[RMDB]
RNA sequence: GGGAACGACUCGAGUAGAGUCGAAAAGAUAUGGAAGAUAUCAACGGAACGAAGAACUCGGAAACGAGGGAGUUCCUGUUGAGUAUCUUCCUAAGUCAAAAUCGCUAGUCCUUCGGGACUAGCGAAACAUGCUAAAGUCCUUCGGGACUUUAGCAUGAAAAGAAACAACAACAACAAC
Reactivity to 2A3 in 0.01 (KOAc 150mM, MgCl2 10mM, bicine 150mM(pH8.5), 24C), signal-to-noise 1, nucleotides 027 to 126: g010a000u050a060u180g030g010a010a020g020a010u010a010u030c020a000a010c010g010g010a010a000c010g110a300a120g000a140a090c030u010c000g000g020a150a050a030c000g000a010g080g020g000a020g000u020u030c010c030u020g020u000u010g010a030g030u090a000u000c010u000u000c000c000u000a050a010g050u060c020a030a000a000a300u000c040g010c030u020a000g000u000c000c000u020u140c300g040g000g000a000c000u010a000g000c000g000a000a000a000
Reactivity to DMS in 0.01 (KOAc 150mM, MgCl2 10mM, bicine 150mM(pH8.5), 24C), signal-to-noise 2, nucleotides 027 to 126: g010a020u000a300u020g020g000a020a000g000a010u000a010u020c010a020a000c010g010g000a020a000c000g000a090a220g000a040a120c000u000c000g010g010a140a080a200c000g010a000g000g030g000a080g000u000u000c000c000u000g000u010u000g000a030g010u000a010u000c000u000u000c000c000u020a010a070g010u010c030a060a140a160a110u000c000g000c000u000a000g000u000c000c000u000u020c260g020g000g010a020c000u000a000g020c020g020a000a010a080
Conditions: 150 mM KOAc, 10 mM MgCl2 and 150 mM bicine (pH 8.5), 24 C. An RNA of 177 nucleotides, treated with 2A3 and DMS and read out base by base. Values cover nucleotides 27 to 126. The data come from the RNA Mapping Database (RMDB), library TTRDEL. For DMS, 1,519 sequencing reads were counted. For 2A3, 1,472 sequencing reads were counted.